The record gives the reactivity of an RNA of 207 nucleotides to DMS and 2A3. For DMS the reverse transcriptase was MarathonRT. The reactions ran in a buffer of 150 mM KOAc, 10 mM MgCl2 and 150 mM bicine (pH 8.5), at 24 C. It was measured as part of the RMDB library M2RFPK. The 2A3 profile rests on 5,248 reads. For 2A3 the reverse transcriptase was SuperScript II with manganese. Reactivities are given for positions 27 through 156.
RNA sequence: GGGAACGACUCGAGUAGAGUCGAAAAUACCGUCUUCUCCCCGACGGUUUCAAUCCCUAGCUUCACGUUGUGUAGCGUAGGUGGAAGGUAUCGUGUGGUGUAUAAACACCACAUAGUCUCUUAGGGGUCAAGCUGAUAAACUUCGGUUUAUCAGCAACUUAUCAUCCGGAUUCGUCCGGAUGAUAAGAAAAGAAACAACAACAACAAC
Reactivity to DMS in 0.01 (KOAc 150mM, MgCl2 10mM, bicine 150mM(pH8.5), 24C), signal-to-noise 3, nucleotides 027 to 156: u000a050c020c010g030u000c020u010u000c030u000c000c010c000c140g020a040c010g010g000u010u010u000c070a110a130u000c020c010c010u010a090g010c020u000u000c050a070c010g010u000u000g040u000g000u000a040g000c040g020u000a020g030g030u000g050g020a090a090g010g010u000a050u000c050g040u000g030u000g000g070u010g030u000a140u010a170a130a130c010a000c000c000a000c000a010u000a010g010u000c030u000c020u000u010a250g010g010g030g010u010c070a110a210g010c000u000g000a010u000a000a010a020c000u000u000c180g050g000u000u000u000a000u000c010a010g000c010a010a010
Reactivity to 2A3 in 0.01 (KOAc 150mM, MgCl2 10mM, bicine 150mM(pH8.5), 24C), signal-to-noise 6, nucleotides 027 to 156: u080a000c000c000g010u020c020u230u030c050u120c000c000c010c020g010a010c000g000g000u010u030u040c040a020a050u040c000c000c000u010a000g010c000u040u050c020a030c080g300u260u220g020u090g020u060a020g020c060g130u030a030g000g050u090g080g050a090a060g080g020u140a050u160c030g000u010g000u000g020g000u010g040u030a110u110a260a260a020c000a000c000c000a000c000a000u000a010g010u000c010u010c010u140u160a030g000g000g030g000u040c070a080a040g000c000u000g000a000u000a000a010a000c000u040u080c180g080g000u000u000u000a000u000c000a000g000c000a000a000